[RMDB]
RNA sequence: GGGAACGACUCGAGUAGAGUCGAAAAGCUAUCUACAAGAGGUGUAUUUUAAAUAUAAGACACAGAUCUGUUGAAAGUAAAAACAUGAAAUGGGAAAAGAGGGGUAUGCAAAUAGAAAGCAUAAUAAAGGUGUAGUGGCUCUAUUAAUAUCAGACACCACUCAAUGAUUUUUCGAAAUCAUUGAGUGAAAAGAAACAACAACAACAAC
Reactivity to 2A3 in 0.01 (KOAc 150mM, MgCl2 10mM, bicine 150mM(pH8.5), 24C), signal-to-noise 1, nucleotides 027 to 156: g020c010u010a030u090c000u050a040c010a050a040g010a030g000g010u010g000u040a020u060u070u130u200a060a120a070u140a050u050a110a030g040a010c010a000c020a060g070a100u010c040u060g050u040u060g090a050a050a000g020u080a010a150a000a000a000c080a020u060g060a090a100a040u060g000g010g030a040a170a000a000g040a010g000g000g000g000u030a020u080g060c030a180a000a000u010a110g060a060a060a020g020c010a010u020a010a030u100a050a220a000g030g020u030g060u060a040g030u020g040g000c030u000c000u030a040u060u100a080a070u040a040u180c000a000g030a050c020a040c060
Reactivity to DMS in 0.01 (KOAc 150mM, MgCl2 10mM, bicine 150mM(pH8.5), 24C), signal-to-noise 1, nucleotides 027 to 156: g030c040u000a070u000c010u010a090c000a030a080g040a050g040g020u010g000u020a010u070u010u000u000a010a120a200u000a160u000a030a180g020a090c010a080c020a050g020a080u000c000u000g000u000u010g030a080a080a180g030u020a050a060a160a040a030c070a030u020g030a060a110a090u000g000g020g000a040a110a060a090g000a100g040g000g010g030u010a020u000g010c020a030a040a070u010a170g000a080a070a130g010c020a060u000a030a160u000a020a030a010g020g020u000g050u000a090g040u000g000g000c090u010c000u040a130u020u000a070a060u010a070u000c020a000g000a130c080a030c110

Annotation
The record gives the reactivity of an RNA of 207 nucleotides to 2A3 and DMS. The data come from the RNA Mapping Database (RMDB), library OK3TST. For DMS, 1,695 sequencing reads were counted.